An RNA of 177 nucleotides, treated with DMS and 2A3 and read out base by base. For DMS the reverse transcriptase was MarathonRT. For 2A3, 13,037 sequencing reads were counted.

RNA sequence: GGGAACGACUCGAGUAGAGUCGAAAAGAUAUGGAACCUCCUUUUGACGGCAACUCUCGGAAACGAGAGAAUUGCCGAUAAGGAGAUUCCUAAGUCAAACUUGAUUUGACUUCGGUCAAAUCAAGAACAAAGCACAUUAGUUCGCUAAUGUGCUUUGAAAAGAAACAACAACAACAAC
Reactivity to DMS in 0.01 (KOAc 150mM, MgCl2 10mM, bicine 150mM(pH8.5), 24C), signal-to-noise 6, nucleotides 027 to 126: g010a030u000a250u010g000g000a010a000c020c000u000c000c000u000u000u010u010g010a160c080g010g000c010a010a030c000u000c000u000c000g010g010a090a070a140c000g010a030g000a010g000a060a060u000u000g010c000c000g010a030u000a010a000g000g010a010g000a020u000u000c000c000u000a030a110g000u010c020a120a110a230c000u000u000g000a020u000u000u000g000a030c000u000u020c200g030g000u000c000a000a000a010u000c010a000a000g010a110a160
Reactivity to 2A3 in 0.01 (KOAc 150mM, MgCl2 10mM, bicine 150mM(pH8.5), 24C), signal-to-noise 3, nucleotides 027 to 126: g000a000u040a010u090g000g010a000a000c000c000u020c010c020u070u090u060u230g300a160c080g000g000c000a020a020c010u010c000u000c010g010g000a050a030a020c010g000a000g010a000g010a040a040u120u000g000c000c010g000a010u010a000a000g000g010a000g000a000u000u000c000c000u010a050a010g020u020c060a130a040a120c000u010u010g000a000u000u010u000g000a000c000u020u080c300g050g000u000c000a000a000a000u000c000a000a000g000a040a020
It was measured as part of the RMDB library TTRDEL.